[RMDB]
RNA sequence: GGGAACGACUCGAGUAGAGUCGAAAACAAGGUUUUUGGGCAUGGAAUUGGAAGAUGUCUUUCAGAAGCAAGCUAAUAGCUAAGGGAAGGCCUUUGGUGUAGGUGUUGACAAAGCGAUUAAGCUGUGCCUCCCGUUAAAGUUCGCUUUAACGGGAGGAAAAGAAACAACAACAACAAC
Reactivity to DMS in 0.01 (KOAc 150mM, MgCl2 10mM, bicine 150mM(pH8.5), 24C), signal-to-noise 2, nucleotides 027 to 126: c050a110a130g020g030u010u000u010u010u030g000g010g050c040a040u000g000g020a100a130u010u010g030g020a070a050g000a150u000g010u000c010u010u010u000c070a060g070a120a090g000c070a080a060g010c060u000a100a060u010a110g010c030u000a060a220g000g000g010a070a060g000g010c050c040u000u000u000g010g000u000g020u000a030g000g000u000g000u000u000g020a080c080a040a090a060g010c010g010a090u000u000a080a100g000c020u000g000u000g020
Reactivity to 2A3 in 0.01 (KOAc 150mM, MgCl2 10mM, bicine 150mM(pH8.5), 24C), signal-to-noise 2, nucleotides 027 to 126: c030a060a120g080g030u020u080u080u160u210g090g010g000c020a000u020g040g080a120a100u080u000g000g020a040a030g050a070u090g060u010c000u000u120u030c020a050g020a150a000g000c020a010a000g000c020u100a100a020u090a170g020c010u030a070a080g080g000g020a000a060g040g020c000c000u000u100u100g060g000u020g060u010a060g000g060u010g050u140u030g060a030c010a030a090a000g030c000g010a010u080u100a080a010g010c010u020g030u030g040
The record gives the reactivity of an RNA of 177 nucleotides to DMS and 2A3. For DMS the reverse transcriptase was MarathonRT. For DMS, 2,029 sequencing reads were counted. The RNA was probed in 150 mM KOAc, 10 mM MgCl2 and 150 mM bicine (pH 8.5) at 24 C. For 2A3, 1,370 sequencing reads were counted. Source: RMDB library OK2TST, as collected in RNAgym.